[RMDB]
RNA sequence: GGGAACGACUCGAGUAGAGUCGAAAAGGAGGACACGGACGACAAACCGUGAGUUCUAUUGCCCUUUAUUGUUGGGUGCACCCUGGGACCCAGUAAUGCCCGGGGGGAGGCGGGGUAAACCCAUACCACACAAAUCAGUUCGCUGAUUUGAAAAGAAACAACAACAACAAC
Reactivity to 2A3 in 0.01 (KOAc 150mM, MgCl2 10mM, bicine 150mM(pH8.5), 24C), signal-to-noise 9, nucleotides 027 to 129: g050g020a000g020g030a000c000a000c020g040g060a060c060g050a060c150a050a110a020c010c010g000u020g040a070g050u040u020c030u070a130u070u200g050c000c000c010u060u130u050a190u050u120g090u010u030g000g010g020u030g000c050a080c010c000c010u010g030g020g010a060c000c010c020a010g060u120a040a060u170g040c020c010c020g000g000g000g000g000g000a050g010g040c020g000g000g000g010u030a020a030a040c000c010c010a010u040a050c030c010a070c000a010
Reactivity to DMS in 0.01 (KOAc 150mM, MgCl2 10mM, bicine 150mM(pH8.5), 24C), signal-to-noise 9, nucleotides 027 to 129: g010g000a040g010g010a120c000a040c050g000g000a070c070g000a150c300a100a140a070c030c000g000u020g020a140g030u030u020c040u000a010u050u040g030c030c000c010u030u050u030a120u020u000g020u020u030g000g000g030u030g020c140a090c020c020c000u000g010g010g010a120c020c040c040a040g000u040a070a080u030g000c010c000c000g030g000g010g000g000g000a080g030g040c100g000g010g000g000u010a040a110a080c050c020c010a110u000a040c070c040a110c170a170

This 170-nucleotide RNA was probed chemically with 2A3 and DMS. The reactions ran in a buffer of 150 mM KOAc, 10 mM MgCl2 and 150 mM bicine (pH 8.5), at 24 C. For DMS the reverse transcriptase was MarathonRT. Source: RMDB library 15KLIB, as collected in RNAgym. The DMS profile rests on 71,933 reads.